[RMDB]
This 177-nucleotide RNA was probed chemically with DMS and 2A3.
For DMS the reverse transcriptase was MarathonRT.
For 2A3 the reverse transcriptase was SuperScript II with manganese.
The reactions ran in a buffer of 150 mM KOAc, 10 mM MgCl2 and 150 mM bicine (pH 8.5), at 24 C.
High DMS reactivity at an A or C suggests that its Watson-Crick edge is free.
As a SHAPE reagent, 2A3 marks flexible, mostly unpaired nucleotides at the ribose 2'-OH.

RNA sequence: GGGAACGACUCGAGUAGAGUCGAAAAAGAGCCGACGAACCUUCCAACCUUCCAACCUUCCAAGCUUCCAACCUUCCAACCUUCCAAUCUACUCGAGAGGAGGAGGAGGAGGAGGAGGAGGACAUAAACUCACUUAUGCAUUCGUGCAUAAGUGAGUAAAAGAAACAACAACAACAAC
Reactivity to DMS in 0.01 (KOAc 150mM, MgCl2 10mM, bicine 150mM(pH8.5), 24C), signal-to-noise 1, nucleotides 027 to 126: a140g010a100g000c000c000g000a090c120g020a170a120c090c020u000u020c020c030a020a090c050c000u000u000c030c070a080a080c040c040u010u000c010c000a090a090g010c030u000u000c050c040a040a110c080c010u000u010c000c010a050a180c080c020u010u000c010c020a100a270u000c000u010a040c030u010c040g020a000g000a210g000g000a030g000g080a230g000g000a090g000g020a150g000g000a140g020g000a280g010g000a070g000g000a300c230a020u000a030a020
Reactivity to 2A3 in 0.01 (KOAc 150mM, MgCl2 10mM, bicine 150mM(pH8.5), 24C), signal-to-noise 1, nucleotides 027 to 126: a020g110a060g000c020c020g030a030c050g000a010a050c000c030u010u000c020c050a060a060c030c000u060u030c000c010a130a090c010c000u000u000c030c000a070a050g000c030u050u000c010c020a130a160c050c020u020u060c010c020a060a080c030c040u060u050c040c000a020a040u000c000u020a080c010u060c080g020a030g010a040g070g020a040g000g020a040g000g070a050g000g130a020g000g040a030g020g010a060g020g040a030g020g000a010c010a060u230a040a130